[RMDB]
RNA sequence: GGGAACGACUCGAGUAGAGUCGAAAAAUACACCUGCAGUAGGACUCAGCGACCGUCACAACAAGGUUGUGCUGGUAUCCGACGGUCGUAUAGCCCUGUCUUGCAGGUUGCCUUGCACUGACGUGCCACACCAUUUACAGAUUCGUCUGUAAAUGAACGCGUAUUAGAGAUUCGUCUCUAAUACGCGAAAAGAAACAACAACAACAAC
Reactivity to DMS in 0.01 (KOAc 150mM, MgCl2 10mM, bicine 150mM(pH8.5), 24C), signal-to-noise 1, nucleotides 027 to 156: a110u000a050c030a030c040c050u000g050c020a040g000u010a000g020g000a060c000u000c150a250g000c030g000a020c010c010g020u010c000a240c060a110a040c020a060a080g000g010u020u010g000u000g050c000u080g080g000u000a030u000c110c030g000a050c020g040g000u000c050g020u000a110u000a010g000c010c020c000u000g030u000c050u000u000g060c020a010g020g000u000u000g000c010c080u000u000g000c000a110c040u020g030a100c180g010u000g000c060c050a030c080a140c040c000a010u000u010u000a010c000a000g010a100u000u000c300g020u020c000u000g000u000a030a000a010u000g070a050a080
Reactivity to 2A3 in 0.01 (KOAc 150mM, MgCl2 10mM, bicine 150mM(pH8.5), 24C), signal-to-noise 3, nucleotides 027 to 156: a000u100a000c080a000c010c010u000g000c010a010g000u020a000g000g020a010c010u050c140a030g010c010g000a000c000c000g000u010c020a030c000a110a090c050a170a100g110g040u060u050g030u150g110c090u050g070g090u120a120u060c070c050g000a000c000g000g000u000c000g000u070a100u080a140g000c010c010c000u030g080u120c030u060u140g000c000a000g010g000u000u020g020c000c000u010u110g020c010a010c040u210g120a070c150g030u020g000c040c010a070c010a040c040c000a010u000u000u000a000c000a010g010a030u010u140c180g100u010c090u010g000u000a000a000a000u010g020a030a010
Source information: An RNA of 207 nucleotides, treated with DMS and 2A3 and read out base by base. Reactivities are given for positions 27 through 156. For 2A3, 2,876 sequencing reads were counted. 2A3 adducts were read by reverse transcription with SuperScript II with manganese. The reactions ran in a buffer of 150 mM KOAc, 10 mM MgCl2 and 150 mM bicine (pH 8.5), at 24 C. High 2A3 reactivity points to a flexible backbone, as in loops and unpaired stretches. DMS adducts were read by reverse transcription with MarathonRT.